[RMDB]
RNA sequence: GGGAACGACUCGAGUAGAGUCGAAAAGGGCUUGACGCAUCGCCCGAAUACGAUGCAUGUGCUUUUGCACUAAGAUAAAUGUCCGUAUUGUAGGGGACAUAGAACCUACUCAUUAAUGUCCGAAGAGUCUGGGACGAUCAUCAGGCAAGACUAAGAAACGUCGCUAAUAGUUCGCUAUUAGCGACGUAAAAGAAACAACAACAACAAC
Reactivity to 2A3 in 0.01 (KOAc 150mM, MgCl2 10mM, bicine 150mM(pH8.5), 24C), signal-to-noise 3, nucleotides 027 to 156: g040g000g000c030u080u090g020a030c040g020c030a010u000c030g010c030c000c000g010a000a000u040a010c010g000a040u060g030c040a080u110g000u000g030c010u160u200u300u300g000c010a000c040u120a090a040g080a200u070a110a160a050u180g010u000c010c010g030u080a050u050u060g010u010a010g000g060g010g000a010c000a050u090a010g060a000a000c000c000u000a020c020u040c020a010u120u260a150a060u100g060u020c050c020g040a160a000g010a130g090u000c000u080g000g000g040a060c000g000a050u040c000a030u030c010a060g020g000c010a090a000g010a080c040u090a180a000g070a090a170
Reactivity to DMS in 0.01 (KOAc 150mM, MgCl2 10mM, bicine 150mM(pH8.5), 24C), signal-to-noise 1, nucleotides 027 to 156: g020g030g050c000u000u010g050a000c030g030c040a050u000c000g020c010c010c060g030a090a070u010a050c050g020a040u000g010c020a220u000g030u000g010c060u040u000u040u000g020c000a090c010u030a090a060g000a210u010a060a170a110u010g000u020c040c010g030u000a100u000u000g000u000a070g040g020g000g000a040c070a000u010a020g000a130a140c020c010u000a020c040u000c160a220u000u000a030a170u060g030u000c040c030g000a120a220g090a130g050u000c000u020g000g010g030a050c020g000a020u000c030a080u000c020a110g000g020c000a060a040g000a050c050u070a050a150g000a090a200

The data come from the RNA Mapping Database (RMDB), library OK3TST.
Structure probing data (2A3 and DMS) for a 207-nucleotide construct.
2A3 adducts were read by reverse transcription with SuperScript II with manganese.
The 2A3 profile rests on 1,230 reads.